An RNA of 207 nucleotides, treated with 2A3 and read out base by base. The reactions ran in a buffer of 150 mM KOAc, 10 mM MgCl2 and 150 mM bicine (pH 8.5), at 24 C. For 2A3 the reverse transcriptase was SuperScript II with manganese. The 2A3 profile rests on 874 reads.
[RMDB]
RNA sequence: GGGAACGACUCGAGUAGAGUCGAAAAGCUCCUUUGCGCUUUUUUUUCGGAUUAGGCGUGGAGGCGAAAGUCACCCUCCUCGCAUCGCAAGUUCGUGCUUGCGACGUACACGUAGGGCGAGGGGUGGAAAACAGUAUGGGAUUCGUCCCAUACUGAAGACCAUUCAGUGGUUCGCCACUGAAUGGUCAAAAGAAACAACAACAACAAC
Reactivity to 2A3 in 0.01 (KOAc 150mM, MgCl2 10mM, bicine 150mM(pH8.5), 24C), signal-to-noise 2, nucleotides 027 to 156: g000c010u050c000c000u020u030u040g000c000g000c030u000u000u000u000u010u020u010u020c300g120g050a070u060u070a040g000g020c040g000u030g020g010a000g010g040c050g060a120a010a010g100u070c060a050c030c010c000u000c000c000u000c000g000c030a030u020c000g000c000a010a000g010u080u250c150g150u300g120c000u000u000g000c010g010a000c020g000u070a030c170a040c170g140u080a060g080g100g020c010g000a000g000g020g000g000u140g010g030a030a040a010a070c000a000g000u010a000u000g000g000g000a010u080u060c110g090u030c060c000c000a000u010a000c000u000g000a000a010